[RMDB]
RNA sequence: GGGAACGACUCGAGUAGAGUCGAAAAUCCUAAGUCGUUGAUAACUCACGCUUGGAUUUAAUACGGGAGCAUCGGAAACGAUGCUUUGAUCGUAUUUGUCAGCGUGAGGAAGCAACGAUAUGGAAAACCCUUCUUUCACUUCGGUGAAAGAAGGGAACGUACUCUCAGGGUUCGCCCUGAGAGUACGAAAAGAAACAACAACAACAAC
Reactivity to 2A3 in 0.01 (KOAc 150mM, MgCl2 10mM, bicine 150mM(pH8.5), 24C), signal-to-noise 2, nucleotides 027 to 156: u010c010c000u010a150a060g040u010c000g000u000u000g000a010u010a120a070c000u000c000a000c000g040c020u040u170g160g000a030u150u280u230a000a000u000a010c010g010g010g020a010g000c010a000u000c010g040g020a020a090a060c000g000a000u000g000c040u000u000u020g020a030u060c010g000u000a000u000u000u010g010u000c000a000g000c000g000u000g000a000g000g000a020a020g000c010a000a000c000g000a000u040a080u030g050g000a050a080a010a020c000c000c000u000u000c000u010u000u000c000a010c000u010u090c300g090g000u000g000a000a000a000g000a010a000g000g000g000a010a010
This 207-nucleotide RNA was probed chemically with 2A3. The reactions ran in a buffer of 150 mM KOAc, 10 mM MgCl2 and 150 mM bicine (pH 8.5), at 24 C.